[RMDB]
RNA sequence: GGGAACGACUCGAGUAGAGUCGAAAAUUGUCUGCGCGGGCAGAGUGCUGGAGCACCCGUGCAUGGCCAGCGUGAUGACGCUCUGCUGCUGCUGACUUAGGCCAUGGCCGUUGGAGCCGCCAAACGAUGCGGCGUGAUAUUUCGAUAUCACGCCGCAAAAAGAAACAACAACAACAAC
Reactivity to DMS in 0.01 (KOAc 150mM, MgCl2 10mM, bicine 150mM(pH8.5), 24C), signal-to-noise 1, nucleotides 027 to 126: u010u000g000u020c000u000g000c040g000c150g000g010g000c050a020g000a060g010u000g000c040u010g000g050a210g000c030a050c190c030c140g030u000g000c090a020u000g010g000c020c050a080g000c020g000u030g080a200u010g050a160c180g000c080u030c000u000g000c000u000g000c000u010g000c050u000g010a060c060u000u000a080g000g000c000c180a160u000g000g000c010c000g000u000u020g030g030a210g000c000c040g000c040c070a110a020a070c150g000a220
Reactivity to 2A3 in 0.01 (KOAc 150mM, MgCl2 10mM, bicine 150mM(pH8.5), 24C), signal-to-noise 2, nucleotides 027 to 126: u190u070g020u060c040u040g020c010g000c020g000g000g060c010a000g000a010g060u050g020c000u040g000g010a010g120c020a110c050c000c000g050u020g030c010a050u100g030g050c000c000a010g000c000g060u180g110a130u250g020a060c060g000c000u010c010u030g000c000u070g010c030u030g000c010u000g000a010c010u080u120a070g010g000c020c090a090u160g060g000c000c070g070u050u170g100g010a030g020c110c000g000c000c000a060a020a000c040g000a000
Source: RMDB library OK1LIB, as collected in RNAgym. An RNA of 177 nucleotides, treated with DMS and 2A3 and read out base by base. Values cover nucleotides 27 to 126.